[RMDB]
RNA sequence: GGGAACGACUCGAGUAGAGUCGAAAACUGCAGUCUGUAUUACAGCUUGUAAUUUAGGGGGCGCUGUUUGUAGGAAGCAUGCUACAGAGUACAGAGAGUAUAUGGAAGCAUAUAAUCUUGUCUCUGCCAACGGUUCGAUUCGUCGAACCGAAAAGAAACAACAACAACAAC
Reactivity to 2A3 in 0.01 (KOAc 150mM, MgCl2 10mM, bicine 150mM(pH8.5), 24C), signal-to-noise 8, nucleotides 027 to 129: c030u030g020c000a040g040u020c010u040g090u090a110u080u180a040c010a010g030c020u080u160g090u200a170a220u090u100u260a150g000g000g010g010g030c020g000c020u010g020u030u070u080g040u020a020g000g040a030a040g060c040a020u110g000c000u040a040c010a000g000a000g010u100a040c030a000g140a000g000a000g100u010a010u010a000u010g020g040a080a040g090c010a000u000a000u000a010a040u000c000u000u000g010u010c000u000c000u000g060c030c010a040a010
Reactivity to DMS in 0.01 (KOAc 150mM, MgCl2 10mM, bicine 150mM(pH8.5), 24C), signal-to-noise 7, nucleotides 027 to 129: c000u030g020c050a060g010u030c040u000g050u020a120u060u030a020c030a070g030c090u030u030g000u000a080a110u050u030u040a050g030g020g040g000g040c120g030c060u060g010u000u000u000g030u050a090g020g040a090a040g060c120a070u000g030c120u000a180c050a000g000a040g040u060a040c050a050g000a040g010a000g040u010a030u040a010u020g000g030a110a060g020c030a040u010a020u010a040a030u040c000u010u060g020u000c050u000c020u030g000c080c060a080a170